[RMDB]
The record gives the reactivity of an RNA of 207 nucleotides to 2A3. Source: RMDB library OK3TST, as collected in RNAgym. The RNA was probed in 150 mM KOAc, 10 mM MgCl2 and 150 mM bicine (pH 8.5) at 24 C. Reactivities are given for positions 27 through 156.
RNA sequence: GGGAACGACUCGAGUAGAGUCGAAAAUCUUCAUUCAUUUAUCAUUUUAUCAAUAAAAGUUCUAUAAAUGUAAGCUGGGCACAGUGGCAUGUGUCUAUAGUUCCAGUGACUCAGGAGACUAAGGCAAGAGGAUCGCUUGAGCCCAAGAGUUCAAGUACCUACCUAGUGGAUUCGUCCACUAGGUAGGAAAAGAAACAACAACAACAAC
Reactivity to 2A3 in 0.01 (KOAc 150mM, MgCl2 10mM, bicine 150mM(pH8.5), 24C), signal-to-noise 1, nucleotides 027 to 156: u000c000u200u170c010a070u130u010c000a020u000u110u080a030u050c050a080u060u130u130u170a100u160c010a080a070u230a300a120a050a040g030u130u000c070u110a110u040a150a070a030u100g010u040a080a050g080c040u010g000g000g110c000a000c000a130g010u020g100g000c000a030u050g040u010g020u070c000u000a190u010a000g000u040u010c010c010a050g000u000g180a030c050u050c050a020g020g010a030g000a000c000u060a000a000g020g000c000a040a000g050a010g160g090a090u050c000g000c040u050u100g000a010g000c000c000c020a000a010g030a000g010u030u040c030a060a000g000u000a000